[RMDB]
Conditions: 150 mM KOAc, 10 mM MgCl2 and 150 mM bicine (pH 8.5), 24 C. An RNA of 177 nucleotides, treated with 2A3 and DMS and read out base by base.
RNA sequence: GGGAACGACUCGAGUAGAGUCGAAAACAGUCAACGUGAAGGCGGGCCAGACCAUCGCCGCAUUCUACCAGAGCACCGUCAUGAUCUUUGGCACGAUGGCUCGCUACAUACACAGAGUUAGGGAAAAGAUAGGGAUUAUGUUCGCAUAAUCCCUAUCAAAAGAAACAACAACAACAAC
Reactivity to 2A3 in 0.01 (KOAc 150mM, MgCl2 10mM, bicine 150mM(pH8.5), 24C), signal-to-noise 8, nucleotides 027 to 126: c020a020g160u100c040a030a050c100g010u040g060a140a040g050g000c000g000g000g010c020c010a020g040a090c030c020a080u090c050g030c050c020g010c010a030u120u020c020u080a100c030c030a020g000a010g090c050a030c070c040g110u100c050a080u110g090a120u050c030u070u060u050g020g000c050a010c110g090a070u040g000g000c010u010c010g000c000u030a020c010a060u140a020c030a000c020a050g050a010g110u070u110a080g050g020g000a050a090a010a050
Reactivity to DMS in 0.01 (KOAc 150mM, MgCl2 10mM, bicine 150mM(pH8.5), 24C), signal-to-noise 9, nucleotides 027 to 126: c080a140g010u000c060a070a100c140g010u000g010a180a150g000g020c010g010g010g010c010c020a080g010a140c090c080a080u010c090g020c050c040g010c090a050u010u000c060u000a080c060c040a080g000a050g000c110a050c040c030g020u000c140a060u000g010a060u010c030u000u000u000g010g010c050a060c140g020a110u000g010g010c010u000c020g000c010u000a040c080a090u010a120c060a050c060a080g000a110g010u000u000a070g000g000g010a090a070a090a100
For DMS, 14,641 sequencing reads were counted.